The data come from the RNA Mapping Database (RMDB), library OK3TST.
Structure probing data (2A3 and DMS) for a 207-nucleotide construct.
The DMS profile rests on 3,208 reads.
For 2A3 the reverse transcriptase was SuperScript II with manganese.
Reactivities are given for positions 27 through 156.
[RMDB]
RNA sequence: GGGAACGACUCGAGUAGAGUCGAAAAUGUGAUGAUACCUAGGAGAUAAUAGGUACCUAGGAGAUAAUAACCUAGGUAUCUAAUUCAAUGGAUUUCAGAUUUAGUGGGCCUGUAGCAUCUUGAAUUUCAUCACUUGGGUCUUUAAUCCAAAAGAAAACACGAUUAUAUAGUUCGCUAUAUAAUCGUGAAAAGAAACAACAACAACAAC
Reactivity to 2A3 in 0.01 (KOAc 150mM, MgCl2 10mM, bicine 150mM(pH8.5), 24C), signal-to-noise 4, nucleotides 027 to 156: u100g010u010g010a020u020g000a010u070a100c020c040u060a080g080g040a090g060a030u150a210a050u030a150g000g010u000a000c000c010u000a010g090g060a040g040a040u240a190a060u080a200a020c010c000u000a000g000g000u020a000u000c000u010a010a030u030u030c030a010a040u030g040g000a020u030u050u070c030a010g020a080u040u070u190a070g030u040g000g030g020c030c000u060g060u080a010g030c010a010u030c010u070u070g040a090a070u080u090u070c030a030u010c000a010c000u030u020g060g000g020u010c000u030u100u050a070a050u060c020c000a020a030a000a080g120a060a080a010a050
Reactivity to DMS in 0.01 (KOAc 150mM, MgCl2 10mM, bicine 150mM(pH8.5), 24C), signal-to-noise 2, nucleotides 027 to 156: u000g020u000g010a030u020g000a060u000a050c000c020u000a080g000g000a120g010a100u010a080a210u000a030g020g030u000a010c010c010u010a030g010g000a150g000a210u000a120a160u000a110a210c000c020u000a010g020g030u000a000u000c000u000a030a060u000u000c100a100a190u000g000g000a110u000u000u000c040a120g000a170u010u010u000a070g030u000g000g020g020c020c020u000g010u000a120g000c070a050u000c060u000u010g040a120a110u000u000u000c000a040u000c030a030c030u010u010g010g020g020u000c020u010u000u020a050a110u020c000c010a060a060a070a160g000a130a100a050a160